The record gives the reactivity of an RNA of 207 nucleotides to 2A3 and DMS. The data come from the RNA Mapping Database (RMDB), library OK3TST. For DMS, 1,615 sequencing reads were counted.
[RMDB]
RNA sequence: GGGAACGACUCGAGUAGAGUCGAAAACGGGACAAUCGCAAUAUAAAACCCUGACCAUCACAUGGGGCAUUAGGCGACUCUGCAUCAGCAUCGCUUAAGUAUGAGUGGGCAGCAGAGAGGCUCGGUUAUUUUGGUUCCUGAACAUCUGGCUGGGGCAGAAGAAAUAUGUCUUCGGACAUAUUUCUUCAAAAGAAACAACAACAACAAC
Reactivity to 2A3 in 0.01 (KOAc 150mM, MgCl2 10mM, bicine 150mM(pH8.5), 24C), signal-to-noise 3, nucleotides 027 to 156: c020g000g020g050a020c050a040a140u100c090g000c040a090a050u150a030u050a300a140a070a070c000c000c000u020g060a060c060c040a120u140c050a050c050a120u100g000g000g010g030c040a040u080u100a070g040g030c040g020a030c040u010c020u050g000c030a090u080c100a170g060c020a100u120c010g020c000u060u050a140a050g110u110a140u190g030a020g030u050g000g010g000c010a010g030c020a000g020a010g030a020g050g000c040u050c030g000g060u110u060a130u030u070u100u080g050g010u060u020c000c000u010g050a080a040c040a070u030c010u050g020g000c010u030g000g000g020g030c020a010
Reactivity to DMS in 0.01 (KOAc 150mM, MgCl2 10mM, bicine 150mM(pH8.5), 24C), signal-to-noise 1, nucleotides 027 to 156: c040g000g040g000a130c050a030a070u000c130g020c070a050a180u010a280u020a070a100a180a110c030c000c000u020g020a110c080c030a130u000c050a130c050a150u000g030g000g020g070c030a110u030u000a030g020g000c010g010a170c030u010c010u000g020c030a150u010c050a130g030c030a050u010c020g010c010u000u000a060a210g010u000a070u000g000a090g010u000g020g000g090c010a200g030c020a050g050a100g000a120g010g020c050u000c030g000g010u000u000a140u000u000u000u030g000g010u000u000c000c000u000g000a050a070c130a060u000c120u010g000g000c050u000g020g050g050g070c140a080